Source: RMDB library OK3TST, as collected in RNAgym. The record gives the reactivity of an RNA of 207 nucleotides to 2A3 and DMS. The RNA was probed in 150 mM KOAc, 10 mM MgCl2 and 150 mM bicine (pH 8.5) at 24 C. For DMS the reverse transcriptase was MarathonRT.
RNA sequence: GGGAACGACUCGAGUAGAGUCGAAAAGCAAAGGAACCUGCACAGGGAGGAGGAACUAGUGAUCCUGCUCCCAGCCCUGGUUCACCAAGUGACUGCAUGUAUGCCUCUUUGUGCCUCAGUUAACUCAUCUGAUAAAUGGGUAUGACAAUUCCAAAAACAUCAGGUAAAUCUUCGGAUUUACCUGAUGAAAAGAAACAACAACAACAAC
Reactivity to 2A3 in 0.01 (KOAc 150mM, MgCl2 10mM, bicine 150mM(pH8.5), 24C), signal-to-noise 4, nucleotides 027 to 156: g030c030a050a040a030g100g000a020a030c010c010u040g020c040a020c080a100g000g000g000a000g020g070a000g000g010a030a040c030u040a110g100u030g150a080u020c000c000u040g110c010u010c000c010c000a000g010c010c010c040u040g010g000u030u030c030a030c040c050a060a010g030u030g100a070c030u070g020c040a060u060g020u150a040u120g030c010c010u030c000u040u040u060g030u060g020c010c000u020c030a040g000u020u030a020a010c010u000c030a030u000c030u030g050a050u090a140a020a010u030g010g020g000u070a100u130g020a030c040a090a140u110u090c030c040a060a050a040a040a040
Reactivity to DMS in 0.01 (KOAc 150mM, MgCl2 10mM, bicine 150mM(pH8.5), 24C), signal-to-noise 2, nucleotides 027 to 156: g030c090a060a130a100g000g020a030a050c000c010u010g010c110a040c060a150g010g020g070a060g000g030a080g000g000a040a170c020u010a180g030u020g000a200u000c020c020u010g010c000u000c010c010c000a030g040c030c040c000u000g000g010u010u020c060a100c050c020a070a210g030u000g000a080c040u010g070c050a130u000g000u010a110u000g000c030c040u000c020u000u030u010g000u000g030c020c060u000c050a160g020u000u000a080a040c050u010c010a030u000c000u000g020a240u000a000a070a050u000g010g040g030u000a090u010g000a090c010a100a120u000u000c000c050a040a070a090a120a180